RNA sequence: GGGAACGACUCGAGUAGAGUCGAAAAUCUGUCGUCCAGGCUGGAGUGCAGUGGUACAAUCUCGGCUCACUGCAACCUCUGCCUCCUGGGUUUAAGAAAUUCUCUGCCUCAGCCUCCAGAGUAGCUGGGCUUUAUCUAACUUCGGUUAGAUAAAGCCAAAAGAAACAACAACAACAAC
Reactivity to DMS in 0.01 (KOAc 150mM, MgCl2 10mM, bicine 150mM(pH8.5), 24C), signal-to-noise 3, nucleotides 027 to 126: u020c010u000g060u010c110g020u010c030c000a050g020g000c280u060g010g000a060g000u000g010c050a000g030u020g010g020u000a030c090a110a090u040c090u010c150g010g010c060u010c020a010c030u010g020c000a030a040c100c030u010c020u020g000c080c010u000c020c000u000g000g010g000u030u030u020a180a020g000a030a090a090u030u020c040u030c000u010g000c040c020u010c020a060g010c010c010u000c030c020a050g000a130g000u020a070g030c050u010g010
Reactivity to 2A3 in 0.01 (KOAc 150mM, MgCl2 10mM, bicine 150mM(pH8.5), 24C), signal-to-noise 8, nucleotides 027 to 126: u020c020u020g080u090c040g040u000c000c020a020g030g010c040u100g030g040a080g030u100g000c000a000g010u020g040g020u140a200c060a120a210u080c130u060c160g040g000c080u090c050a010c000u010g000c020a040a070c010c020u060c040u060g070c000c010u030c000c010u040g020g010g070u020u080u120a070a020g050a010a060a010u110u020c020u010c010u030g040c020c010u040c010a010g010c010c000u030c030c030a030g010a060g090u120a040g050c040u060g010
Structure probing data (DMS and 2A3) for a 177-nucleotide construct. In probing experiments dimethyl sulfate is read out at A N1 and C N3, which are open when not base-paired. For 2A3, 6,929 sequencing reads were counted. The DMS profile rests on 5,141 reads. For DMS the reverse transcriptase was MarathonRT. The RNA was probed in 150 mM KOAc, 10 mM MgCl2 and 150 mM bicine (pH 8.5) at 24 C.